[RMDB]
RNA sequence: GGGAACGACUCGAGUAGAGUCGAAAAUGAGAAUAAUUUCUGGUGUCUGGCCUAUGAAGGAGAUGACGCCAAGAUUCAUCAGGAUCUGGCUGACGUAAUUGACCGCUCAUUUCGUCGGGCGGCGCGACUAAAUGAGCUGGUUCGCCAGCUCAUUUAGAAAAGAAACAACAACAACAAC
Reactivity to DMS in 0.01 (KOAc 150mM, MgCl2 10mM, bicine 150mM(pH8.5), 24C), signal-to-noise 8, nucleotides 027 to 126: u010g000a120g010a140a080u010a080a080u000u000u010c120u010g000g010u000g000u000c010u000g010g020c040c030u000a160u020g010a140a080g010g010a100g000a120u000g010a070c070g010c020c010a030a050g000a030u000u000c060a110u010c130a080g000g010a090u000c040u000g010g000c030u000g010a050c100g010u010a050a060u000u000g000a130c040c050g010c030u010c020a170u000u010u000c120g010u000c100g000g000g020c020g000g010c040g000c130g000a150
Reactivity to 2A3 in 0.01 (KOAc 150mM, MgCl2 10mM, bicine 150mM(pH8.5), 24C), signal-to-noise 5, nucleotides 027 to 126: u080g000a030g040a080a080u110a070a090u070u110u080c080u050g040g000u010g020u010c010u030g150g060c030c000u140a190u300g200a190a060g050g020a110g030a040u090g020a020c020g000c020c000a000a030g010a000u030u020c030a090u070c060a110g050g030a040u020c010u030g050g000c040u030g040a030c030g020u050a040a110u060u100g060a110c020c000g010c020u020c020a090u050u180u140c070g070u020c040g020g010g010c020g000g000c010g000c010g010a020